RNA sequence: GGGAACGACUCGAGUAGAGUCGAAAACAGCGGCUCAAGGGGGAUUUCCCCGCUCUACCCGUGGUUAUCAACGGCGGCAUUACCACGCUGGCGCAGGCCCGGUCCCUGCUGCGGGGUCUGGAUGGGGUGACUAACACCAAUUCGUUGGUGUUAGUCAAAAAGAAACAACAACAACAAC
Reactivity to DMS in 0.01 (KOAc 150mM, MgCl2 10mM, bicine 150mM(pH8.5), 24C), signal-to-noise 4, nucleotides 027 to 126: c080a110g010c040g010g000c030u000c130a110a110g020g000g020g000g000a190u000u010u010c030c000c000c020g020c050u000c080u000a070c080c030c000g020u010g000g020u000u000a080u010c120a070a100c070g000g020c020g010g010c080a060u000u000a060c050c050a060c060g010c040u000g000g000c080g010c050a050g000g000c040c050c030g020g000u010c040c020c010u000g010c040u000g020c040g010g010g000g010u010c040u000g000g010a080u010g000g010g000g010